[RMDB]
The record gives the reactivity of an RNA of 207 nucleotides to 2A3 and DMS.

RNA sequence: GGGAACGACUCGAGUAGAGUCGAAAAAUGGGUGAAAGCACUAUUGCCCAUCAUAGCAGCUGUCCACAAAGCAGUCUGCUAGUCGUCGUUGCACCGCUUUGCAAGGCGCAACGCACGGCGAGACCGUCGAAUUGCGGGGACAUCCUUACAGCUCAAGCUUUACUCGAAAGUUCGCUUUCGAGUAAAGAAAAGAAACAACAACAACAAC
Reactivity to 2A3 in 0.01 (KOAc 150mM, MgCl2 10mM, bicine 150mM(pH8.5), 24C), signal-to-noise 7, nucleotides 027 to 156: a000u020g000g000g010u060g050a100a080a050g080c060a050c110u100a090u070u110g010c000c010c000a010u040c060a030u030a010g000c000a000g010c000u010g020u170c080c090a140c120a130a070a000g010c000a010g040u100c010u010g000c000u000a030g000u000c000g000u000c000g010u010u010g000c010a020c040c010g030c140u160u160u300g070c100a120a100g000g000c000g000c010a010a010c000g020c050a000c000g000g010c000g010a010g010a030c020c020g060u100c050g100a160a180u120u100g030c030g000g010g020g020a030c020a090u070c010c010u060u120a060c060a040g010c020u030c080a050a020g020
Reactivity to DMS in 0.01 (KOAc 150mM, MgCl2 10mM, bicine 150mM(pH8.5), 24C), signal-to-noise 2, nucleotides 027 to 156: a040u010g020g020g060u010g020a040a060a120g020c090a100c060u000a140u000u000g010c000c010c020a060u000c090a210u000a040g030c020a030g010c010u000g010u000c050c040a170c300a120a200a140g000c020a020g000u000c020u000g020c000u000a030g010u010c040g030u000c000g010u000u000g010c000a030c000c040g020c110u000u000u020g020c130a070a140g010g030c050g000c000a020a010c000g020c080a010c000g020g000c010g000a070g010a100c040c010g000u000c060g020a090a140u000u000g000c010g000g030g000g020a120c090a130u000c030c040u010u000a080c030a110g030c030u000c050a100a170g040
For DMS, 4,552 sequencing reads were counted. Conditions: 150 mM KOAc, 10 mM MgCl2 and 150 mM bicine (pH 8.5), 24 C. Source: RMDB library ARCHII, as collected in RNAgym. Values cover nucleotides 27 to 156.